[RMDB]
RNA sequence: GGGAACGACUCGAGUAGAGUCGAAAAGGGGUCCCAACGAUAAGAGCGCAAGAGCAAUGAUGCUGAAGCCUCCACGGUUGAGCUCUUGGCUCUUUUGACGUUGGGACGGAGGCACCCAAAACCUUCUGGUGCAUUGUUCGCAAUGCACCAGAAGGAACACGGAUCUAUCCUUCGGGAUAGAUCCGUGAAAAGAAACAACAACAACAAC
Reactivity to 2A3 in 0.01 (KOAc 150mM, MgCl2 10mM, bicine 150mM(pH8.5), 24C), signal-to-noise 1, nucleotides 027 to 156: g160g020g000g000u000c000c000c000a000a000c020g030a060u200a300a080g010a000g000c300g030c100a020a020g000a000g020c000a060a300u300g090a180u210g060c000u000g050a070a080g020c000c000u070c090c000a060c030g020g050u100u190g160a030g000c000u040c010u000u010g000g050c000u000c000u070u020u000u050g040a000c010g010u000u000g020g000g000a020c020g000g000a000g010g020c000a060c000c000c020a010a090a060a200c000c000u000u000c030u010g000g000u010g000c000a000u010u010g040u030u090c190g010c160a000a000u000g020c000a000c000c000a000g000a000a000g000g000a000a000
About this RNA: The record gives the reactivity of an RNA of 207 nucleotides to 2A3. Values are in units of 0.01, from 0 to 300, in steps of 10. For 2A3, 699 sequencing reads were counted.